[RMDB]
RNA sequence: GGGAACGACUCGAGUAGAGUCGAAAAUUGAUAAUUUGUUGUGUAACUUCAUUUAAAUGAAUUGAAACAAAUUUAAUACAAGUGGAUGUAGGAGAACCGUCCGUCCUUUACAUUGGUAUAAAAGUGAACGACACAGACCUCUUCGGAGGUCUGUGAACUGAGUACUAUAGUUCGCUAUAGUACUCAGAAAAGAAACAACAACAACAAC
Reactivity to DMS in 0.01 (KOAc 150mM, MgCl2 10mM, bicine 150mM(pH8.5), 24C), signal-to-noise 2, nucleotides 027 to 156: u000u020g010a130u000a070a080u000u000u010g010u000u010g010u010g010u010a100a120c110u010u000c010a040u000u030u010a060a090a090u010g010a030a110u000u000g010a210a090a130c010a040a070a030u000u000u000a070a160u010a090c030a080a120g030u020g020g010a070u010g030u010a060g000g010a090g000a020a090c060c040g030u000c070c030g000u000c010c010u000u010u000a030c000a060u010u000g000g030u000a110u000a030a070a070a100g020u000g000a020a110c020g020a260c010a030c000a020g000a020c000c000u000c010u000u000c300g040g020a030g030g020u000c020u000g020u000g000a000a100
Reactivity to 2A3 in 0.01 (KOAc 150mM, MgCl2 10mM, bicine 150mM(pH8.5), 24C), signal-to-noise 2, nucleotides 027 to 156: u030u060g030a020u020a200a040u050u040u070g000u000u020g010u010g050u070a070a030c020u010u010c030a050u070u160u280a140a150a060u070g020a040a040u150u070g030a060a040a000c000a070a050a030u080u100u160a120a060u140a040c040a090a000g020u020g050g020a020u050g010u090a060g000g100a060g010a070a050c030c010g070u030c010c020g040u020c010c000u050u040u050a070c050a070u060u100g080g020u060a040u030a120a110a020a000g070u080g080a080a010c060g100a000c020a000c000a010g000a000c020c000u030c030u030u020c180g140g000a010g000g000u000c000u000g000u000g000a000a020
Background
Conditions: 150 mM KOAc, 10 mM MgCl2 and 150 mM bicine (pH 8.5), 24 C. The record gives the reactivity of an RNA of 207 nucleotides to DMS and 2A3. It was measured as part of the RMDB library M2RFPK. Values cover nucleotides 27 to 156. The DMS profile rests on 4,215 reads. As a SHAPE reagent, 2A3 marks flexible, mostly unpaired nucleotides at the ribose 2'-OH.